[RMDB]
RNA sequence: GGGAACGACUCGAGUAGAGUCGAAAAGAAUCACCGUACCUACUUAGGUUUACGCUCCAAGAUCGGUGGAUAGCAGCCCUAUCAAUAUCUAGGAGAACUGUGCUAUGUUUAGAAGAUUAGGUAGUCUAUUACACAGCCAUGUUCGCAUGGCUGUGAAUCAUUCUAAACGCUUCGGCGUUUAGAAUGAAAAAGAAACAACAACAACAAC
Reactivity to 2A3 in 0.01 (KOAc 150mM, MgCl2 10mM, bicine 150mM(pH8.5), 24C), signal-to-noise 2, nucleotides 027 to 156: g100a010a080u090c010a010c030c000g020u000a010c000c000u030a030c050u180u260a020g000g060u020u020u030a040c030g020c010u000c020c000a010a040g020a060u080c030g000g070u030g040g110a050u090a000g140c120a010g040c000c000c000u020a030u130c060a170a020u020a020u180c020u020a010g000g020a060g010a050a050c070u040g020u000g040c010u070a060u120g040u080u100u090a060g020a210a060g010a190u020u130a090g110g000u020a030g030u040c030u090a120u100u150a040c010a000c000a020g000c000c000a020u020g050u060u060c140g000c130a010u000g000g010c000u000g000u000g000a000a000
Reactivity to DMS in 0.01 (KOAc 150mM, MgCl2 10mM, bicine 150mM(pH8.5), 24C), signal-to-noise 2, nucleotides 027 to 156: g000a190a120u000c010a130c010c010g040u000a110c020c020u000a150c120u010u000a110g070g020u010u000u010a080c120g030c030u000c000c000a090a150g000a040u000c040g020g030u010g010g000a110u000a060g000c090a190g010c060c050c020u000a130u000c110a030a180u000a130u000c080u030a090g020g000a050g030a080a050c030u010g010u010g000c050u010a020u010g010u000u020u000a080g000a090a200g000a120u010u010a050g020g020u000a110g010u010c030u010a080u000u010a200c000a020c010a030g030c000c010a000u010g020u000u000c200g000c000a050u000g020g000c020u000g050u000g020a030a070
An RNA of 207 nucleotides, treated with 2A3 and DMS and read out base by base. The RNA was probed in 150 mM KOAc, 10 mM MgCl2 and 150 mM bicine (pH 8.5) at 24 C. For 2A3, 1,090 sequencing reads were counted. It was measured as part of the RMDB library M2RFPK.